[RMDB]
RNA sequence: GGGAACGACUCGAGUAGAGUCGAAAACAAAUACUACUUUAUUUACAGCAGGAGUACUAACAAGUAAUGCUGCUUUAACUACUGUAACUUCUGUACAACUAGGGAUUAAUAGGAUUUAUUUAGAAACUGAUUAUUAAUUAUGGCGGUAAAAGGAGUAGACUAUAUCAAUAUUCGUAUUGAUAUAGUCAAAAGAAACAACAACAACAAC
Reactivity to 2A3 in 0.01 (KOAc 150mM, MgCl2 10mM, bicine 150mM(pH8.5), 24C), signal-to-noise 5, nucleotides 027 to 156: c020a020a090a060u140a090c040u020a010c010u070u120u130a130u080u110u060a050c030a020g000c000a000g000g080a030g070u010a010c010u060a160a110c050a170a030g020u050a060a050u130g080c030u020g000c000u080u080u040a050a020c030u050a010c020u040g030u070a060a080c010u030u030c010u040g060u040a030c020a070a020c030u050a040g050g100g070a010u040u050a040a030u050a050g000g020a010u050u100u070a100u070u150u050a290g080a050a110a000c020u020g020a020u050u120a020u040u030a060a020u050u050a030u100g040g000c030g020g020u040a040a080a040a050g020g010a020g020u070a030
Reactivity to DMS in 0.01 (KOAc 150mM, MgCl2 10mM, bicine 150mM(pH8.5), 24C), signal-to-noise 2, nucleotides 027 to 156: c060a130a110a130u000a120c030u000a160c030u020u010u000a020u040u000u000a050c050a110g000c040a080g010g020a100g010u000a080c050u000a120a150c190a120a170g010u000a070a070u000g010c010u000g020c010u010u000u000a100a080c070u000a060c050u000g020u010a060a070c030u000u000c030u000g050u000a040c040a070a060c010u000a060g020g030g010a030u000u000a030a050u000a030g000g000a210u000u010u000a090u040u010u010a190g000a130a040a150c040u010g000a300u000u000a050u000u000a010a040u000u000a090u000g030g030c030g010g040u000a030a060a060a040g020g000a100g010u000a210
About this RNA: This 207-nucleotide RNA was probed chemically with 2A3 and DMS. For 2A3, 3,710 sequencing reads were counted. Conditions: 150 mM KOAc, 10 mM MgCl2 and 150 mM bicine (pH 8.5), 24 C. The data come from the RNA Mapping Database (RMDB), library OK3TST.